[RMDB]
RNA sequence: GGGAACGACUCGAGUAGAGUCGAAAAAGAGCACAUAGGAGGAACUGCAGGAGGGCCCAUUUGUCUUUGAACUUCAGAAGUGAGGAGGUGUUUAUGUCUCAGCUGGGCGUGUUUAGGUUUUGGCAACGUGGAUGGGUUAGUAAUGCCGUGCUUUCUAGAGUAGCAUUUAGUUCGCUAAAUGCUACUCAAAAGAAACAACAACAACAAC
Reactivity to 2A3 in 0.01 (KOAc 150mM, MgCl2 10mM, bicine 150mM(pH8.5), 24C), signal-to-noise 1, nucleotides 027 to 156: a020g040a020g010c050a050c040a140u180a050g030g040a020g000g010a050a020c050u110g000c030a060g000g010a040g010g020g010c000c020c040a060u080u080u060g040u010c070u060u140u170g070a060a120c010u070u040c070a060g010a140a040g090u030g050a070g060g010a010g000g050u020g040u010u100u030a090u110g030u000c030u030c070a050g000c020u060g000g040g000c010g010u080g000u010u060u060a050g020g000u000u030u040u060g030g000c020a050a010c080g030u020g020g030a050u010g010g000g030u010u070a000g030u060a060a040u040g020c020c020g010u010g030c000u010u080u050c000u100a010
Reactivity to DMS in 0.01 (KOAc 150mM, MgCl2 10mM, bicine 150mM(pH8.5), 24C), signal-to-noise 1, nucleotides 027 to 156: a150g000a050g000c030a080c060a130u010a110g030g010a060g020g010a050a060c060u000g010c070a060g000g000a090g040g010g010c050c050c040a090u010u000u020g010u010c000u000u010u000g010a090a080c000u000u010c000a080g010a090a000g030u010g000a100g020g030a060g030g050u000g000u010u000u010a060u020g000u010c020u000c030a140g030c050u020g050g000g010c040g030u000g000u000u020u010a090g030g010u010u010u010u000g020g010c030a050a070c110g000u020g010g020a080u000g020g000g050u000u000a050g010u000a100a130u000g020c030c040g050u000g010c020u000u010u000c040u010a300
The record gives the reactivity of an RNA of 207 nucleotides to 2A3 and DMS. The reactions ran in a buffer of 150 mM KOAc, 10 mM MgCl2 and 150 mM bicine (pH 8.5), at 24 C. For DMS the reverse transcriptase was MarathonRT. 2A3 adducts were read by reverse transcription with SuperScript II with manganese.